[RMDB]
This 170-nucleotide RNA was probed chemically with DMS and 2A3. The RNA was probed in 150 mM KOAc, 10 mM MgCl2 and 150 mM bicine (pH 8.5) at 24 C. For 2A3, 2,433 sequencing reads were counted. For DMS the reverse transcriptase was MarathonRT.
RNA sequence: GGGAACGACUCGAGUAGAGUCGAAAAUUCUGAAGUGGUUGUUAAUAAUUUAGACAAGAGUGCUGGCCAUCCUUUUAAUAAGUUUGGCAAAGCUCGUGUCUAUUAUGAGAGCAUGUCUUACCAGGAGUGAUCCAAUCCUUCGGGAUUGGAAAAAGAAACAACAACAACAAC
Reactivity to DMS in 0.01 (KOAc 150mM, MgCl2 10mM, bicine 150mM(pH8.5), 24C), signal-to-noise 1, nucleotides 027 to 129: u030u000c010u030g000a070a110g050u020g020g020u010u000g040u010u070a050a040u000a120a050u040u020u010a030g020a050c030a120a010g010a020g030u000g090c250u020g000g050c000c000a030u020c060c010u010u000u040u100a030a070u090a090a030g010u000u000u000g010g060c000a020a070a150g010c020u000c020g010u020g010u010c000u070a040u020u000a040u020g000a150g020a090g020c010a080u050g010u000c030u020u080a000c000c000a120g000g000a080g010u000g010a140
Reactivity to 2A3 in 0.01 (KOAc 150mM, MgCl2 10mM, bicine 150mM(pH8.5), 24C), signal-to-noise 2, nucleotides 027 to 129: u080u040c030u010g000a150a000g090u110g120g010u000u030g000u070u040a000a030u030a090a020u130u100u040a010g010a000c020a100a080g010a010g050u020g010c100u060g110g000c000c000a000u000c010c010u060u000u040u050a200a060u180a130a000g030u010u010u000g000g000c040a010a100a120g000c000u000c010g010u020g000u000c000u000a010u100u020a030u050g110a000g010a000g040c010a000u050g050u000c000u050u040a020c020c000a000g090g000a020g010u020g020a010